[RMDB]
RNA sequence: GGGAACGACUCGAGUAGAGUCGAAAAAGCGAAGGUUAUAGUCGCGGUCAUGAGCAAUAAGAGCGGUCUGACUCUCACAUUUGAACGACCUACAGAGGCUAAUGUUGCGCUAGCUUUACAGGAUCAAAGUCAUCGCCCUAUUCGUAGGGCGAUGACUAAAAGAAACAACAACAACAAC
Reactivity to 2A3 in 0.01 (KOAc 150mM, MgCl2 10mM, bicine 150mM(pH8.5), 24C), signal-to-noise 1, nucleotides 027 to 126: a000g150c060g050a030a030g080g030u050u300a120u070a060g050u040c060g000c000g050g000u090c070a070u060g040a040g000c060a010a180u100a140a110g110a000g020c010g000g170u000c110u040g030a000c000u000c000u070c000a000c000a060u000u000u110g110a150a000c100g020a110c000c000u010a000c000a040g030a040g000g000c060u170a030a070u040g020u020u040g040c140g000c000u050a040g000c000u000u180u120a010c010a040g150g000a020u090c180a000a170
Reactivity to DMS in 0.01 (KOAc 150mM, MgCl2 10mM, bicine 150mM(pH8.5), 24C), signal-to-noise 1, nucleotides 027 to 126: a170g020c000g000a080a100g010g000u000u110a080u030a030g000u060c130g050c050g000g030u000c030a090u070g020a100g050c120a010a080u040a070a120g000a010g030c080g000g000u090c140u040g000a090c060u000c110u000c030a110c070a040u000u020u020g090a050a210c140g000a040c000c030u010a070c120a020g040a000g010g000c020u000a000a100u040g000u000u040g030c000g020c000u000a030g000c070u000u000u050a030c240a000g010g000a000u040c130a200a120

An RNA of 177 nucleotides, treated with 2A3 and DMS and read out base by base. For DMS the reverse transcriptase was MarathonRT. It was measured as part of the RMDB library OK1LIB. The reactions ran in a buffer of 150 mM KOAc, 10 mM MgCl2 and 150 mM bicine (pH 8.5), at 24 C.